[RMDB]
RNA sequence: GGGAACGACUCGAGUAGAGUCGAAAAGAAAGGGACCCCUGCCAAGGGAGCGUCGGUCAGCACCCUACGCAUAUUUUUUUAUGCCGCUGACACCCCUCGACGCAGCAGGAGGGGUGGUCCCGAAAGACAGGAUACCAUCAUUCGUGAUGGUAUCCUGAAAAGAAACAACAACAACAAC
Reactivity to 2A3 in 0.01 (KOAc 150mM, MgCl2 10mM, bicine 150mM(pH8.5), 24C), signal-to-noise 1, nucleotides 027 to 126: g040a060a040a020g000g010g000a030c030c010c000c040u080g080c020c020a170a050g110g130g020a110g070c000g010u020c070g000g000u010c010a000g020c000a100c050c070c030u060a060c100g000c000a010u010a030u050u190u020u020u020u010u040a020u040g040c020c080g000c010u000g000a010c020a060c030c060c020c050u000c000g020a030c000g000c010a040g100c040a020g000g140a020g000g000g000g050u030g010g030u010c000c000c010g010a010a010a000g050a010
Reactivity to DMS in 0.01 (KOAc 150mM, MgCl2 10mM, bicine 150mM(pH8.5), 24C), signal-to-noise 2, nucleotides 027 to 126: g010a160a110a140g010g010g010a050c000c010c030c010u000g020c030c080a200a100g030g010g000a110g010c030g010u000c020g040g040u000c000a020g030c020a170c140c150c140u000a060c230g000c000a010u000a000u000u000u010u010u030u000u000a010u000g010c010c280g010c010u000g000a020c000a200c050c040c000c090u000c020g000a040c050g040c020a100g030c080a130g000g000a060g010g020g000g020u010g060g000u000c000c020c000g000a070a080a080g010a220
Structure probing data (2A3 and DMS) for a 177-nucleotide construct. 2A3 is a SHAPE reagent: it acylates the 2'-hydroxyl of flexible nucleotides of all four kinds. The RNA was probed in 150 mM KOAc, 10 mM MgCl2 and 150 mM bicine (pH 8.5) at 24 C. DMS adducts were read by reverse transcription with MarathonRT. The 2A3 profile rests on 1,658 reads. The DMS profile rests on 1,559 reads.